About this RNA: Conditions: 150 mM KOAc, 10 mM MgCl2 and 150 mM bicine (pH 8.5), 24 C. The record gives the reactivity of an RNA of 177 nucleotides to DMS and 2A3. It was measured as part of the RMDB library OK2TST. 2A3 adducts were read by reverse transcription with SuperScript II with manganese. For DMS, 905 sequencing reads were counted. For DMS the reverse transcriptase was MarathonRT.
RNA sequence: GGGAACGACUCGAGUAGAGUCGAAAAAGAAUGCCCUGAAAAGUGUACUGCGAUGUGUCAAACUUGGGUACCUUUUGCACUACCGAGGGACCAAAUGCAGUACUAGAAGUGGUACCCAAUCUGAGCAGUAGUAUACGCACUUCGGUGCGUAUACUACAAAAGAAACAACAACAACAAC
Reactivity to DMS in 0.01 (KOAc 150mM, MgCl2 10mM, bicine 150mM(pH8.5), 24C), signal-to-noise 2, nucleotides 027 to 126: a050g000a110a190u000g000c000c020c000u000g000a120a070a100a240g020u010g010u000a020c010u000g000c000g000a200u020g030u000g020u010c090a050a040a080c120u000u010g040g020g000u000a030c080c100u010u000u000u000g010c080a030c120u010a110c040c010g000a040g000g000g010a090c040c020a120a060a110u000g020c000a000g000u000a000c000u000a120g000a070a090g060u010g020g030u000a060c040c010c010a080a050u000c060u030g000a130g010c200a160
Reactivity to 2A3 in 0.01 (KOAc 150mM, MgCl2 10mM, bicine 150mM(pH8.5), 24C), signal-to-noise 2, nucleotides 027 to 126: a000g090a080a050u130g050c000c000c000u000g070a080a080a060a040g130u080g020u040a020c000u040g000c010g070a140u050g150u000g060u060c060a100a300a170c120u050u040g120g000g050u030a010c010c000u090u110u120u140g110c080a030c060u070a040c040c040g030a040g020g060g030a010c060c000a020a040a110u170g000c000a010g030u010a030c020u010a010g030a060a020g090u110g150g000u070a080c060c020c040a010a060u060c050u090g100a050g140c050a030

High 2A3 reactivity points to a flexible backbone, as in loops and unpaired stretches.